[RMDB]
RNA sequence: GGGAACGACUCGAGUAGAGUCGAAAAAACGUUGCAUGAUCGUAAAACAUGCCCGGCUUACCGUGAGCCGCCUUUGAAAGAAAGGUUUACACGGACUCUGUUGCGUUACGCACGUACGUAACUUGUGAAAACGGCAUCUUGUUCGCAAGAUGCCGAAUCGACUGCCUUCGUUCGCGAAGGCAGUCGAAAAAGAAACAACAACAACAAC
Reactivity to 2A3 in 0.01 (KOAc 150mM, MgCl2 10mM, bicine 150mM(pH8.5), 24C), signal-to-noise 1, nucleotides 027 to 156: a000a000c000g000u000u000g000c000a000u000g030a040u220c030g060u190a150a000a000a150c050a040u010g010c000c020c000g000g000c000u000u050a040c000c000g010u000g000a000g030c000c020g050c020c000u010u000u000g130a080a040a000g090a000a000a000g030g030u000u070u000a040c000a000c050g030g020a050c030u040c030u100g000u030u000g000c000g050u050u120a040c070g060c120a100c200g060u060a000c000g000u000a000a010c000u010u080g060u010g160a060a040a040a060c010g000g030c010a010u030c000u000u010g000u020u120c130g010c150a000a000g000a000u000g000c000c000g000a000a000

Source: RMDB library M2RFOK, as collected in RNAgym.
This 207-nucleotide RNA was probed chemically with 2A3.
Reactivities are given for positions 27 through 156.